[RMDB]
Structure probing data (2A3 and DMS) for a 177-nucleotide construct.

RNA sequence: GGGAACGACUCGAGUAGAGUCGAAAAAUGGUGCCGAAUGCAUGUGCCAGAACCGCAAGGUCGAACCGGCCGAAAUGAAAGAUCUUGGUGAUGGAACGAUCUUUCAAAAGCUUCACCAGAUUGGGCACCAUCACCACUGGUUCGCCAGUGGUGAUGGAAAAGAAACAACAACAACAAC
Reactivity to 2A3 in 0.01 (KOAc 150mM, MgCl2 10mM, bicine 150mM(pH8.5), 24C), signal-to-noise 2, nucleotides 027 to 126: a000u020g020g000u020g010c010c010g100a060a010u100g040c070a080u080g050u070g060c030c020a030g040a060a000c010c000g010c110a060a050g010g010u020c030g030a130a100c090c070g000g040c000c010g040a020a070a060u070g040a040a000a040g010a000u020c030u160u120g000g010u120g030a090u090g050g060a060a020c070g000a010u000c000u000u070u030c010a040a020a000a030g000c000u070u050c030a060c010c000a050g010a120u010u050g040g020g020c040a010
Reactivity to DMS in 0.01 (KOAc 150mM, MgCl2 10mM, bicine 150mM(pH8.5), 24C), signal-to-noise 2, nucleotides 027 to 126: a080u000g020g000u000g020c010c020g000a030a050u000g030c050a260u010g000u000g030c010c030a110g010a150a060c020c000g000c300a110a150g030g020u000c040g010a100a090c060c070g000g020c010c020g010a100a080a120u010g000a020a030a000g010a010u000c000u030u010g010g020u000g000a070u000g020g010a080a130c090g030a010u000c020u010u000u000c010a020a010a090a080g000c080u010u000c010a050c020c020a180g010a060u000u010g000g000g010c040a050
The DMS profile rests on 1,604 reads. The data come from the RNA Mapping Database (RMDB), library OK2TST.